Record summary: Structure probing data (2A3) for a 207-nucleotide construct. The RNA was probed in 150 mM KOAc, 10 mM MgCl2 and 150 mM bicine (pH 8.5) at 24 C. The data come from the RNA Mapping Database (RMDB), library ARCHII.

RNA sequence: GGGAACGACUCGAGUAGAGUCGAAAAGUUAUUCAAUAAUUGCAAAUCAAAUUCUACCUUUUUCUAUUCCCGUUAAACAUCUAGCUGUUUAAAUUUAAAGACAAUUUAAAGACAAUCUAAAGACUCAAGAGACAAAAAUUUUAGGUAUUUAGGUAACGUAUGUAUGUGAGUUCGCUCACAUACAUACAAAAGAAACAACAACAACAAC
Reactivity to 2A3 in 0.01 (KOAc 150mM, MgCl2 10mM, bicine 150mM(pH8.5), 24C), signal-to-noise 2, nucleotides 027 to 156: g020u020u070a080u160u100c090a050a130u120a190a170u130u090g070c020a040a050a090u030c020a100a050a030u230u000c030u100a150c000c000u030u040u030u010u010c050u030a110u020u000c000c000c000g000u000u020a050a050a000c010a030u040c070u240a030g050c070u000g020u010u030u020a060a080a050u020u120u210a170a090a020g040a000c010a070a000u000u100u150a100a160a000g040a040c030a020a050u000c000u000a060a040a000g000a010c010u040c120a020a000g060a000g010a080c100a000a260a030a150a140u020u130u060u090a030g030g000u060a030u020u070u010a030g000g000u000a040a010c040